Description:
An RNA of 170 nucleotides, treated with DMS and 2A3 and read out base by base. It was measured as part of the RMDB library 15KLIB.
[RMDB]
RNA sequence: GGGAACGACUCGAGUAGAGUCGAAAACCUCGGCAAUGGCGAAUGGGACCCAGAACUCUCUCAGAAUCUAGGGAGAUCUCCCAGAUUCGAGAGAAAACUGGCUCUCCCUUAGCCAUCCGAGUGGACGGUGCUCACACGUUCGCGUGUGAGAAAAGAAACAACAACAACAAC
Reactivity to DMS in 0.01 (KOAc 150mM, MgCl2 10mM, bicine 150mM(pH8.5), 24C), signal-to-noise 4, nucleotides 027 to 129: c070c010u020c000g020g040c100a080a020u010g040g000c000g030a110a050u030g020g030g040a030c270c010c010a000g020a080a300c110u010c000u030c000u030c020a170g040a020a030u010c000u000a110g040g030g030a060g000a170u070c050u000c040c010c000a050g010a010u000u000c030g000a030g020a000g040a000a010a030a090c000u020g010g020c080u000c070u010c080c000c010u000u010a210g020c020c010a020u050c030c010g010a000g000u040g000g040a080c090g000g000u000g030
Reactivity to 2A3 in 0.01 (KOAc 150mM, MgCl2 10mM, bicine 150mM(pH8.5), 24C), signal-to-noise 6, nucleotides 027 to 129: c000c000u000c000g010g000c060a080a010u010g000g000c000g040a050a040u050g000g000g000a030c040c000c000a000g000a030a050c020u000c000u000c010u010c020a110g000a010a000u000c010u120a170g000g040g000a070g050a120u120c130u020c120c000c000a000g000a000u000u000c010g000a000g000a000g000a010a020a000a000c010u010g000g000c000u000c010u000c000c010c000u000u010a000g000c000c000a010u020c000c000g000a000g000u090g020g050a050c100g050g090u140g030